RNA sequence: GGGAACGACUCGAGUAGAGUCGAAAAGGUCGGGUCGACGCGGCGGGUGGUGGAUAUGUCAUCGGGGGCCCGCCAGGCGGCGCUGGUGCGCCUCACCGCCCUGGAACUCAUCAACCGCACCCGCACAAGAUAACAGGGGGUUCGCCCCCUGUUAUCUAAAAGAAACAACAACAACAAC
Reactivity to 2A3 in 0.01 (KOAc 150mM, MgCl2 10mM, bicine 150mM(pH8.5), 24C), signal-to-noise 2, nucleotides 027 to 126: g060g100u150c030g020g010g000u020c040g010a130c030g020c040g050g000c020g000g050g000u030g050g110u110g060g020a110u060a040u210g210u070c100a080u150c060g030g020g000g040g040c030c090c000g000c000c000a000g000g000c110g000g000c100g010c060u070g030g030u090g010c010g000c000c000u040c100a110c000c020g020c050c000c000u030g010g000a050a030c040u000c010a060u080c020a080a110c010c000g030c000a040c000c000c000g040c030a080c010a080
Reactivity to DMS in 0.01 (KOAc 150mM, MgCl2 10mM, bicine 150mM(pH8.5), 24C), signal-to-noise 1, nucleotides 027 to 126: g040g010u020c020g020g070g000u000c030g000a070c050g020c210g000g030c120g030g000g030u030g030g090u010g000g000a050u000a040u030g000u010c070a100u000c070g090g000g000g060g010c060c010c000g010c000c060a000g000g020c220g000g000c090g000c020u040g010g010u060g000c300g000c000c000u000c070a070c000c010g000c000c060c020u050g000g000a120a140c030u000c060a040u020c210a130a020c120c030g000c030a150c100c000c000g000c120a030c170a050
The record gives the reactivity of an RNA of 177 nucleotides to 2A3 and DMS. Conditions: 150 mM KOAc, 10 mM MgCl2 and 150 mM bicine (pH 8.5), 24 C. 2A3 adducts were read by reverse transcription with SuperScript II with manganese.